[RMDB]
RNA sequence: GGGAACGACUCGAGUAGAGUCGAAAAGUUAUGGAUAACGUCUUAGCUACCACUACAACAACAAUGCUGGACGGUGAUGGUUCGACUUACUCGAAACCAUCACGUAGUGGUAGUCGUUCCCAUUCAAGGAAGGAUAGGAGUUCGCUCCUAUCCUUCCAAAAGAAACAACAACAACAAC
Reactivity to DMS in 0.01 (KOAc 150mM, MgCl2 10mM, bicine 150mM(pH8.5), 24C), signal-to-noise 2, nucleotides 027 to 126: g020u000u000a080u020g020g020a150u010a050a050c030g000u000c020u010u020a180g000c000u000a010c000c010a000c020u000a010c030a080a120c150a040a060c190a090a100u010g000c080u000g000g000a080c060g010g040u000g000a020u000g010g000u000u000c010g000a040c240u000u020a100c230u000c000g010a040a050a060c010c000a010u000c020a010c020g020u000a010g020u000g010g000u000a040g010u000c030g000u000u000c000c000c010a150u010u010c190a070a180
Reactivity to 2A3 in 0.01 (KOAc 150mM, MgCl2 10mM, bicine 150mM(pH8.5), 24C), signal-to-noise 3, nucleotides 027 to 126: g060u080u080a090u250g190g070a170u090a230a020c030g030u000c050u110u220a030g010c000u010a020c020c000a030c010u020a010c040a110a000c000a030a000c030a080a190u180g040c040u120g040g050a030c060g020g010u010g000a000u020g010g010u010u010c000g010a050c080u120u170a080c030u080c010g000a050a010a010c020c000a010u020c000a000c000g020u030a000g000u000g000g000u000a000g010u000c000g000u010u000c040c000c000a020u130u100c060a070a010

An RNA of 177 nucleotides, treated with DMS and 2A3 and read out base by base. Source: RMDB library M2PK90, as collected in RNAgym. For DMS the reverse transcriptase was MarathonRT. For DMS, 1,789 sequencing reads were counted. The reactions ran in a buffer of 150 mM KOAc, 10 mM MgCl2 and 150 mM bicine (pH 8.5), at 24 C.